[RMDB]
RNA sequence: GGGAACGACUCGAGUAGAGUCGAAAAGGCAAUCGGGAUGGUGUUUCAGCGGCCGAAUCCAUUCCCCGCCAUGUCGAUUCGCAACAAUGUGGUUGCCGGCCUGAAGCUGCAGGGUGUGCGCAAUCGCCCAUGUGGAAAUCUUCGGAUUUCCACAUGGAAAAGAAACAACAACAACAAC
Reactivity to DMS in 0.01 (KOAc 150mM, MgCl2 10mM, bicine 150mM(pH8.5), 24C), signal-to-noise 3, nucleotides 027 to 126: g020g020c030a050a000u010c030g020g010g020a040u000g000g010u000g010u000u010u000c090a120g010c040g020g000c040c140g000a040a050u000c070c080a260u000u000c000c000c030c080g000c030c020a010u000g000u010c020g000a060u000u000c170g030c020a070a070c100a060a080u000g030u000g020g010u000u000g010c020c020g000g000c020c000u020g000a070a110g000c050u010g030c040a300g010g000g010u000g000u010g000c090g000c080a030a020u000c030g020c100
Reactivity to 2A3 in 0.01 (KOAc 150mM, MgCl2 10mM, bicine 150mM(pH8.5), 24C), signal-to-noise 1, nucleotides 027 to 126: g110g010c010a020a030u020c020g020g000g000a000u030g000g000u020g060u050u180u100c060a040g040c050g050g000c020c000g040a040a040u000c080c000a060u070u070c010c010c010c010g000c000c020a070u120g300u180c020g030a030u020u020c080g000c020a050a080c030a070a170u170g030u070g050g000u020u020g020c020c000g020g000c000c030u050g030a060a030g020c040u060g000c020a030g030g050g000u090g040u070g060c040g030c010a020a010u030c000g020c010